[RMDB]
RNA sequence: GGGAACGACUCGAGUAGAGUCGAAAACCACGUAAAACAGGUAGGGAAAACACAACUGCCAACAACGAAUUGGCACUCGCUGCUUAAUUAAAAGCAGCCGUCUUCCCAAGUUCUGCUCUGAGGCUUGGGCAAGGCGUCAUAAAUCAGAGCUAUCCUAGGUAGUAGAAGUGUUCGCACUUCUACUACCAAAAGAAACAACAACAACAAC
Reactivity to 2A3 in 0.01 (KOAc 150mM, MgCl2 10mM, bicine 150mM(pH8.5), 24C), signal-to-noise 4, nucleotides 027 to 156: c000c000a050c030g100u130a030a040a140a120c070a090g080g080u140a060g050g040g060a070a070a150a020c120a050c030a100a140c090u080g010c020c020a030a030c060a050a060c050g090a100a120u020u020g010g000c020a020c050u110c070g000c010u030g010c000u070u050a120a120u140u150a140a300a070a000g000c000a000g000c000c000g000u020c000u010u010c000c000c000a000a000g000u000u000c010u030g000c000u000c000u010g000a000g000g000c000u000u000g000g050g000c050a010a000g000g000c000g000u010c010a020u130a080a130a010u000c000a000g000a000g000c010u010a070u020c010c010u000a050
Reactivity to DMS in 0.01 (KOAc 150mM, MgCl2 10mM, bicine 150mM(pH8.5), 24C), signal-to-noise 1, nucleotides 027 to 156: c030c020a120c080g030u000a040a020a110a030c110a040g000g010u000a000g030g000g000a090a030a100a150c060a040c100a110a060c040u040g000c000c000a050a030c070a080a160c080g020a140a300u000u030g010g000c020a060c100u000c100g060c000u020g010c010u000u010a020a230u000u000a060a020a080a040g060c000a030g000c000c020g020u000c000u000u000c000c010c020a010a070g020u000u020c000u000g000c040u020c000u010g040a040g000g050c010u000u000g010g010g030c300a020a020g010g020c070g040u010c090a080u000a060a130a030u000c020a020g040a090g000c020u000a120u000c020c010u000a300